[RMDB]
RNA sequence: GGGAACGACUCGAGUAGAGUCGAAAACAUGCCAACAACAAUCGCCAACAAGGAAAUGUCCUCGGGUAAAUGGCAGUGGCUUGAUGAUGGGGUUACCCUUUUCACUAUUUUAUAGAUAAGGGGAGACACACGGAUUCGUGGCGCUGAAUCGAUAAUAAAUACCAUCAGCAUUCGUGCUGAUGGUAUUAAAAGAAACAACAACAACAAC
Reactivity to 2A3 in 0.01 (KOAc 150mM, MgCl2 10mM, bicine 150mM(pH8.5), 24C), signal-to-noise 2, nucleotides 027 to 156: c080a050u160g000c060c060a040a040c100a000a010c020a010a240u100c090g000c070c000a020a060c010a070a100g100g080a060a010a220u170g040u030c020c000u020c010g110g020g040u130a120a060a040u030g010g000c020a010g040u010g010g020c000u050u060g060a000u000g030a010u060g020g010g130g000u000u190a080c000c000c000u010u000u010u030c030a050c000u060a160u190u150u100u180a180u140a030g000a000u010a060a040g020g020g030g030a060g040a020c040a000c000a000c100g170g000a060u040u050c030g000u010g020g040c040g000c000u110g030a080a060u080c040g010a040u010a190a020u110a030
Reactivity to DMS in 0.01 (KOAc 150mM, MgCl2 10mM, bicine 150mM(pH8.5), 24C), signal-to-noise 2, nucleotides 027 to 156: c030a050u000g000c040c060a150a120c090a050a080c030a050a070u030c020g050c000c020a090a160c090a080a050g000g040a040a130a140u030g010u000c010c010u020c050g060g040g040u000a050a070a070u000g040g050c040a090g040u020g000g020c060u000u000g000a020u000g010a190u020g050g000g040g030u000u000a160c020c000c000u000u000u000u000c110a110c110u020a140u010u030u000u030a130u000a130g000a080u000a040a020g020g020g010g000a300g020a110c010a050c000a120c030g030g010a170u010u010c030g060u020g010g010c030g070c050u000g000a040a110u020c020g010a140u000a080a140u000a090